[RMDB]
RNA sequence: GGGAACGACUCGAGUAGAGUCGAAAAUGGGAUUACAGGCAUCGGCCACCACGCCCGGCUGAUGUUUUUAGGAAACCUUCAGAAACCAAUGGGCUGGAAGAGAAAAGCUUUGAGAAAUGUCGAGAUGCUGGUACCACCCAUUCGUGGGUGGUACCAGAAAAGAAACAACAACAACAAC
Reactivity to 2A3 in 0.01 (KOAc 150mM, MgCl2 10mM, bicine 150mM(pH8.5), 24C), signal-to-noise 2, nucleotides 027 to 126: u090g000g000g040a100u130u300a060c000a000g020g000c000a000u000c090g020g040c010c000a010c000c000a000c150g070c000c000c000g000g000c010u000g000a000u000g000u000u030u000u050u140a160g060g000a090a030a070c000c000u100u160c100a040g150a070a120a020c090c010a060a140u030g000g000g000c000u000g010g030a030a100g000a000g060a210a050a000a000g030c080u190u160u080g070a100g080a030a140a060u150g000u040c020g030a080g030a110u080g070